[RMDB]
RNA sequence: GGGAACGACUCGAGUAGAGUCGAAAAGGCAAUAACGAACUAAUUCUAAGCAAGUAAUGGAGAAAUGCCAGGGUCACUAUCUAGCCAUAAUAAUGCUUGACAGUAUGAUACUAACUGAACAAUAAGUAAAAGCGCUGGUACUUCGGUACCAGCGCAACAACUAGAUAACGUUCGCGUUAUCUAGUUGAAAAGAAACAACAACAACAAC
Reactivity to DMS in 0.01 (KOAc 150mM, MgCl2 10mM, bicine 150mM(pH8.5), 24C), signal-to-noise 3, nucleotides 027 to 156: g040g040c040a090a110u000a110a160c100g020a070a130c050u010a080a090u010u000c040u000a100a110g000c020a070a110g000u000a100a100u020g000g020a120g000a080a090a070u000g000c010c030a080g000g000g000u000c020a080c040u000a050u020c040u000a060g030c050c120a070u000a060a080u010a060a130u010g010c020u010u000g010a060c020a050g020u000a040u010g030a130u000a040c060u010a040a120c030u010g000a030a090c060a080a080u000a020a170g010u000a040a060a120a190g010c000g040c010u010g030g000u000a040c000u000u000c240g020g020u000a000c010c000a020g010c000g020c000a000a020
Reactivity to 2A3 in 0.01 (KOAc 150mM, MgCl2 10mM, bicine 150mM(pH8.5), 24C), signal-to-noise 8, nucleotides 027 to 156: g030g000c040a040a070u120a150a030c070g070a040a030c060u090a090a090u150u050c040u120a070a020g030c040a050a040g030u120a060a060u120g050g030a080g030a080a080a030u060g010c010c010a020g020g010g010u030c030a010c060u040a040u080c030u050a020g030c010c010a020u020a130a040u130a060a030u200g010c020u030u030g030a020c010a000g040u060a060u100g060a030u030a070c020u050a120a040c020u020g050a030a020c030a060a120u130a170a010g050u060a040a110a090a060g000c000g000c000u000g000g010u000a000c000u020u050c120g040g000u000a000c000c000a000g010c000g000c000a000a000
This 207-nucleotide RNA was probed chemically with DMS and 2A3. As a SHAPE reagent, 2A3 marks flexible, mostly unpaired nucleotides at the ribose 2'-OH.